[RMDB]
RNA sequence: GGGAACGACUCGAGUAGAGUCGAAAAUGCAACAACAUGGCGGUCUCGUGGUUGGUGGAAAUGGAAUAGGUGGCACAACUUCUUCAACAUUUCAGGGCAGCGCUGGCGAGGAAGGAGACGAUGGUACCGAACCGAACUGUUUCGACAGUUCGGUUCGAAAAGAAACAACAACAACAAC
Reactivity to DMS in 0.01 (KOAc 150mM, MgCl2 10mM, bicine 150mM(pH8.5), 24C), signal-to-noise 1, nucleotides 027 to 126: u000g000c020a080a040c110a040a090c170a070u000g020g070c070g010g020u000c020u000c060g000u000g020g030u000u010g030g020u030g020g000a020a090a030u020g040g000a080a110u000a130g000g010u000g000g030c070a050c140a050a070c100u000u000c010u000u000c110a100a170c110a050u020u000u000c090a050g010g000g020c050a070g000c050g020c000u000g020g000c090g000a080g010g040a110a100g000g000a070g020a060c160g010a060u000g030g000u010a130c230